[RMDB]
RNA sequence: GGGAACGACUCGAGUAGAGUCGAAAACAGCAUGACCGGCGCGCUCGCCGCGUCCCGCGAGCGGCAGUGGCGGCUGAUCGCCGACGCGGGGCACGAGCUGCGCACGCCGCUGACGAGCCUGCGCACCAACAUCGACCUGCUGCUGCGCGCGGACGCGAUAGUGUUACACGUUCGCGUGUAACACUAUAAAAGAAACAACAACAACAAC
Reactivity to DMS in 0.01 (KOAc 150mM, MgCl2 10mM, bicine 150mM(pH8.5), 24C), signal-to-noise 1, nucleotides 027 to 156: c050a100g020c040a110u000g000a140c020c010g010g000c020g030c060g030c020u000c030g010c060c010g000c000g030u020c030c040c020g030c000g020a090g000c010g000g020c000a080g030u000g030g050c090g040g010c010u000g010a040u020c070g050c030c000g040a060c060g020c030g010g000g010g000c040a060c030g020a100g010c020u000g000c020g040c110a050c100g010c020c040g040c020u000g000a150c070g000a150g000c000c000u000g010c040g000c020a170c040c050a070a060c040a060u000c010g000a110c050c050u020g010c030u000g020c000u010g020c000g000c020g000c000g050g000a030c010g000c010g000
Reactivity to 2A3 in 0.01 (KOAc 150mM, MgCl2 10mM, bicine 150mM(pH8.5), 24C), signal-to-noise 4, nucleotides 027 to 156: c040a010g070c040a080u100g080a130c030c050g060g000c030g010c010g020c030u110c080g060c020c010g000c000g010u010c050c040c020g020c010g010a020g030c000g000g000c010a020g000u070g110g040c050g030g000c030u090g060a190u120c070g000c020c010g020a070c050g000c020g000g000g020g000c020a020c040g030a050g020c030u040g010c020g020c020a020c060g010c010c030g010c020u050g050a070c020g010a010g040c020c000u170g100c020g000c000a040c050c030a120a100c030a110u170c070g080a070c020c020u010g000c010u000g000c000u090g050c010g000c000g010c040g020g000a010c010g000c000g020